Chemical mapping of a 207-nucleotide RNA with 2A3. The data come from the RNA Mapping Database (RMDB), library VIROID.
RNA sequence: GGGAACGACUCGAGUAGAGUCGAAAACCCUGAGAGGCCUCUUCCUAGGCCCGGAGUCUAUCUCCAUCUGGUCCGUCCGGGCCCUCUUCGCCGGGGGAGCCCCCUCUCCGUCCUUAUCCUUCUUUCCGAGAAUUCCUUUGACGUUUCCCAGCCAGGGCAAUUACCUAAUCUUCGGAUUAGGUAAUUGAAAAGAAACAACAACAACAAC
Reactivity to 2A3 in 0.01 (KOAc 150mM, MgCl2 10mM, bicine 150mM(pH8.5), 24C), signal-to-noise 1, nucleotides 027 to 156: c000c000c020u000g040a010g000a020g030g010c000c000u000c010u030u050c000c030u060a080g050g000c000c000c000g020g030a010g040u020c070u160a130u100c040u120c070c000a140u050c110u160g010g060u020c040c020g050u010c030c040g030g000g020c000c030c010u060c050u230u190c090g020c030c030g030g000g000g020g010a000g000c040c040c000c040c000u030c000u020c030c010g120u070c000c010u160u150a080u140c000c030u050u050c000u120u040u020c040c060g030a020g100a150a070u070u030c020c020u120u090u150g030a060c060g020u010u050u050c000c010c010a020g010c050c020a000g080g000g000
Notes: The reactions ran in a buffer of 150 mM KOAc, 10 mM MgCl2 and 150 mM bicine (pH 8.5), at 24 C.